[RMDB]
RNA sequence: GGGAACGACUCGAGUAGAGUCGAAAAGGAGCACAGGGGUGGCCAGCGUAGGGUCCAGCACGUGGGGUGGUACCCCAGGCCUGGGUCAGACAGGGACAAGGCAGGGGACACAGGACAGAGGGGUCCCGCAAACGGGUAAAUUCGUUUACCCGUUUGCAAAAGAAACAACAACAACAAC
Reactivity to DMS in 0.01 (KOAc 150mM, MgCl2 10mM, bicine 150mM(pH8.5), 24C), signal-to-noise 2, nucleotides 027 to 126: g020g000a090g010c080a030c130a090g010g010g010g020u000g030g030c090c050a120g030c110g020u000a060g000g020g030u010c000c040a040g000c150a080c130g050u030g020g000g050g020u010g010g000u010a300c010c010c000c030a020g000g010c290c040u000g000g040g000u040c010a020g000a030c150a120g000g000g000a030c140a070a070g000g000c070a100g000g000g000g010a090c040a030c110a070g020g000a100c030a090g000a080g020g000g020g000u000c040c030c090